Structure probing data (DMS and 2A3) for a 177-nucleotide construct. For DMS, 4,219 sequencing reads were counted. As a SHAPE reagent, 2A3 marks flexible, mostly unpaired nucleotides at the ribose 2'-OH.
RNA sequence: GGGAACGACUCGAGUAGAGUCGAAAAUAGCGACGGCGCGCGGCGCGCGCUGUACUCACGAUCUGGCCGAUCAUCAGCGCGCGCCAUGAUCGGCCGAUCACGAUGGCCGACGAUCGUGGCCAUCUGGCGUUAGGUGAACUUUCGAGUUCACCUAACGAAAAGAAACAACAACAACAAC
Reactivity to DMS in 0.01 (KOAc 150mM, MgCl2 10mM, bicine 150mM(pH8.5), 24C), signal-to-noise 4, nucleotides 027 to 126: u020a120g000c040g010a040c010g000g010c010g020c010g050c140g010g010c070g020c000g040c010g030c010u000g010u000a040c160u000c250a130c180g000a010u000c020u010g040g010c170c100g000a020u000c010a100u000c060a050g000c030g000c070g000c050g030c020c050a000u000g020a060u000c020g010g000c000c010g000a060u000c020a130c130g000a020u000g000g010c000c000g020a080c110g020a100u000c160g020u000g000g010c020c000a020u000c010u010g010g010
Reactivity to 2A3 in 0.01 (KOAc 150mM, MgCl2 10mM, bicine 150mM(pH8.5), 24C), signal-to-noise 2, nucleotides 027 to 126: u160a030g090c110g080a030c030g020g020c000g000c040g000c100g280g090c090g000c020g010c000g000c150u000g020u030a070c040u060c040a110c120g010a020u000c070u150g070g000c020c010g020a000u000c020a030u030c060a020g040c030g030c100g000c040g000c060c000a010u000g000a010u010c000g030g020c010c000g000a020u020c020a000c040g010a010u020g010g000c040c010g070a090c060g080a180u190c130g050u060g000g000c000c000a010u030c030u030g130g020